[RMDB]
RNA sequence: GGGAACGACUCGAGUAGAGUCGAAAAAUACACCAGCAGUAGGACUCAGCGACCGUCACAAUAAGGUUGUGCUGGUAUCCGACGGUCGUAUAGCCCUGUCUUGCAGGUUGCCUUGCACUGACGUGCCACACCAUUUACAGAUUCGUCUGUAAAUGAAGACUAGAUCUUGGUUCGCCAAGAUCUAGUCAAAAGAAACAACAACAACAAC
Reactivity to DMS in 0.01 (KOAc 150mM, MgCl2 10mM, bicine 150mM(pH8.5), 24C), signal-to-noise 1, nucleotides 027 to 156: a100u000a050c040a130c030c010a080g030c010a090g060u020a020g010g020a040c000u000c080a100g000c060g000a010c000c000g020u000c040a160c080a110a070u000a110a150g010g010u000u000g040u020g040c030u010g010g000u000a070u000c030c040g020a060c010g000g010u000c050g040u000a060u000a050g000c000c000c000u000g010u000c040u010u030g000c000a120g040g000u000u000g010c020c130u000u000g010c020a030c030u000g030a120c220g030u010g000c010c030a060c030a070c110c000a030u000u010u000a000c010a000g000a160u010u000c300g010u010c000u030g000u000a020a010a000u010g010a080a160
Reactivity to 2A3 in 0.01 (KOAc 150mM, MgCl2 10mM, bicine 150mM(pH8.5), 24C), signal-to-noise 3, nucleotides 027 to 156: a000u100a010c070a000c020c000a000g010c000a000g020u140a020g010g000a030c010u010c070a000g000c000g000a000c000c000g000u010c010a100c060a210a270u290a300a070g010g000u020u020g020u020g010c010u020g040g020u020a020u020c010c050g000a000c010g000g000u010c020g020u030a030u040a050g000c000c000c000u000g020u030c040u020u050g000c030a030g040g010u080u150g070c020c000u070u070g010c020a040c080u060g050a040c070g040u060g040c030c010a070c010a030c020c010a000u000u010u000a000c010a010g050a040u010u070c140g070u000c090u000g000u000a000a000a000u010g030a090a010
Chemical mapping of a 207-nucleotide RNA with DMS and 2A3. For 2A3, 2,707 sequencing reads were counted. For DMS, 2,415 sequencing reads were counted. The RNA was probed in 150 mM KOAc, 10 mM MgCl2 and 150 mM bicine (pH 8.5) at 24 C. DMS adducts were read by reverse transcription with MarathonRT.